[RMDB]
RNA sequence: GGGAACGACUCGAGUAGAGUCGAAAAGAUAUGGAAUCAUGAACGCUUUUGACGAAGAUUAUUCGGAAACGAAUAAUUCUUCGAUAAGCGUGUGAUUCCUAAGUCAAAAGCACAUGUUCGCAUGUGCGCGAUCAGUUCACUUCGGUGAACUGAUCGCAAAAGAAACAACAACAACAAC
Reactivity to 2A3 in 0.01 (KOAc 150mM, MgCl2 10mM, bicine 150mM(pH8.5), 24C), signal-to-noise 1, nucleotides 027 to 126: g020a010u060a000u150g000g000a020a000u030c040a010u110g260a270a070c000g060c000u090u300u300u300g300a180c110g000a000a000g000a010u000u020a010u000u010c000g020g060a040a040a020c010g000a000a000u030a000a000u240u020c000u010u000c000g010a000u010a010a010g000c000g000u050g000u010g000a000u000u000c000c000u030a110a000g020u020c000a140a020a100a180g010c000a000c000a010u010g020u090u160c300g000c210a010u000g000u020g070c020
Reactivity to DMS in 0.01 (KOAc 150mM, MgCl2 10mM, bicine 150mM(pH8.5), 24C), signal-to-noise 2, nucleotides 027 to 126: g010a020u010a300u000g010g000a000a010u000c000a050u010g040a110a070c000g010c000u000u020u010u010g030a270c250g010a010a020g000a050u000u000a010u000u000c020g000g000a070a060a120c040g030a020a000u000a010a020u020u000c020u000u000c000g020a090u010a010a010g020c000g020u000g010u000g010a000u000u000c000c020u010a010a070g000u000c000a120a080a100a220g010c000a010c010a030u000g000u000u030c240g030c000a000u000g000u000g000c010